[RMDB]
RNA sequence: GGGAACGACUCGAGUAGAGUCGAAAAACCACAUUUAUUCGUAAAUGUGGUAAAAAAGCGUACUACCACAGUCUCGCUACUACCCACCUCCCAAAUAGGAGAGGUAGACCCGAGCUGUGGUAUCGCAAAAAACUACGAGUAUUCGUACUCGUAGUAACCUCUAAUAAUGCUUCGGCAUUAUUAGAGGAAAAGAAACAACAACAACAAC
Reactivity to DMS in 0.01 (KOAc 150mM, MgCl2 10mM, bicine 150mM(pH8.5), 24C), signal-to-noise 1, nucleotides 027 to 156: a040c010c000a000c010a040u020u000u010a030u020u010c240g030u000a010a040a000u000g030u000g010g040u010a000a010a060a150a010a090g000c010g000u000a040c190u010a010c000c020a010c010a050g030u000c030u000c020g030c070u010a260c000u000a010c000c000c010a230c250c000u000c010c010c000a090a170a150u010a070g010g050a020g000a070g010g000u010a000g000a180c170c260c010g010a070g020c020u010g030u000g000g000u000a000u060c000g000c000a020a060a090a130a130a050c010u010a010c010g020a020g010u000a080u010u000c230g000u000a010c040u010c000g030u010a000g010u010a040a010
Reactivity to 2A3 in 0.01 (KOAc 150mM, MgCl2 10mM, bicine 150mM(pH8.5), 24C), signal-to-noise 2, nucleotides 027 to 156: a000c000c010a000c000a000u020u020u010a030u030u090c120g020u030a010a010a010u000g000u010g000g000u030a050a060a000a000a000a030g040c040g030u080a100c050u020a000c000c010a000c000a000g240u100c000u020c010g040c030u140a170c000u020a030c060c000c070a180c000c030u090c000c030c050a100a300a160u200a110g000g000a000g010a050g010g000u000a010g030a060c010c010c000g030a000g000c000u000g010u020g010g000u000a000u070c000g000c000a270a000a000a000a000a000c000u000a000c000g010a000g000u000a020u050u060c130g040u060a170c000u020c010g000u000a000g000u000a000a000